Chemical mapping of a 177-nucleotide RNA with DMS. For DMS the reverse transcriptase was MarathonRT. Conditions: 150 mM KOAc, 10 mM MgCl2 and 150 mM bicine (pH 8.5), 24 C.
[RMDB]
RNA sequence: GGGAACGACUCGAGUAGAGUCGAAAAUAAAACCUUGAUGUGUAGGAUAGGUGGGAGGCUUUGAAGUGUGCACGCCAGUCUGCAUGGAGCCGACCUUGAAAUACCACCCUUUAAUGGAAAAAAAAAAACGAACCUAAAGAUUCGUCUUUAGGUUCGUAAAAGAAACAACAACAACAAC
Reactivity to DMS in 0.01 (KOAc 150mM, MgCl2 10mM, bicine 150mM(pH8.5), 24C), signal-to-noise 1, nucleotides 027 to 126: u000a110a090a060a060c020c010u000u010g010a040u000g010u000g000u000a020g000g000a030u000a020g020g000u000g000g000g000a050g000g020c000u000u000u000g010a110a090g000u010g010u030g010c100a000c090g030c060c210a040g000u000c040u010g000c010a000u010g010g020a030g010c010c000g010a120c300c040u000u000g010a020a030a090u000a080c020c000a000c000c000c020u000u000u000a030a040u030g000g010a000a000a000a000a010a000a030a170a150a080